[RMDB]
This 177-nucleotide RNA was probed chemically with 2A3 and DMS.

RNA sequence: GGGAACGACUCGAGUAGAGUCGAAAACUGCGCCACCCGCAAACGGUUCUCGCUGAGCGUUCCGGUCUUGUCGAAGCAGACCAUGUCGACACGGCCGAGCGCCUCCACCGAGCGCGGGAUGCGGACCUCCGCGAUGGAGGUUCGCCUCCAUCGCGGAAAAAGAAACAACAACAACAAC
Reactivity to 2A3 in 0.01 (KOAc 150mM, MgCl2 10mM, bicine 150mM(pH8.5), 24C), signal-to-noise 4, nucleotides 027 to 126: c020u080g010c020g000c020c040a040c010c000c010g020c030a040a060a010c010g060g000u160u070c220u130c100g090c120u110g020a050g060c000g010u000u040c120c000g040g000u010c020u000u020g000u000c000g030a060a040g140c080a030g070a200c140c050a130u190g050u050c000g000a000c010a010c040g000g000c000c010g000a000g000c010g010c000c000u010c020c000a010c000c010g000a020g020c020g000c000g010g000g010a000u010g010c000g010g030a060c000c030
Reactivity to DMS in 0.01 (KOAc 150mM, MgCl2 10mM, bicine 150mM(pH8.5), 24C), signal-to-noise 2, nucleotides 027 to 126: c060u000g010c040g000c010c050a140c030c030c000g040c030a000a300a200c020g010g000u020u040c000u060c150g000c110u000g040a240g000c000g000u020u030c100c040g000g010u010c010u010u000g000u000c010g010a070a090g020c040a170g000a170c220c060a180u020g000u020c000g000a000c030a020c000g000g000c000c000g000a000g000c070g010c060c020u000c070c250a050c000c000g000a160g030c300g000c000g030g000g030a020u020g000c000g000g000a070c040c050